[RMDB]
RNA sequence: GGGAACGACUCGAGUAGAGUCGAAAAGCUCUCCACACUCCUUCCCCCCGCGGGCCCCCCAAUUCAGAGCCAAGAACCCACCCAUCGGGGUCCGACGUUCCUACCCUUUCUUACCUGUGGCCGGCAUACACAUCGCUCUUCGGAGCGAUGAAAAGAAACAACAACAACAAC
Reactivity to DMS in 0.01 (KOAc 150mM, MgCl2 10mM, bicine 150mM(pH8.5), 24C), signal-to-noise 3, nucleotides 027 to 129: g010c080u000c030u040c020c050a000c050a270c060u010c000c020u020u000c000c010c010c000c070c140g010c060g000g040g070c060c020c010c000c120c140a060a040u080u050c000a060g040a070g030c030c080a030a050g070a090a100c000c010c000a110c140c070c000a000u040c240g000g000g020g080u010c020c070g000a180c020g010u000u000c000c050u050a050c000c000c000u000u010u040c070u050u020a110c000c000u040g060u000g030g010c020c020g030g010c000a030u000a070c070a170
Reactivity to 2A3 in 0.01 (KOAc 150mM, MgCl2 10mM, bicine 150mM(pH8.5), 24C), signal-to-noise 2, nucleotides 027 to 129: g000c010u010c000u000c020c000a000c000a070c020u010c010c000u000u090c000c000c000c000c000c000g050c020g000g000g000c020c000c000c000c000c010a000a000u140u060c070a060g050a000g130c010c010a060a060g000a030a000c000c000c000a060c000c140c000a060u090c100g130g000g000g000u000c020c000g040a060c010g030u030u020c000c040u020a030c000c000c000u050u060u020c030u030u110a170c010c010u110g010u150g040g010c000c020g030g000c000a050u070a020c070a000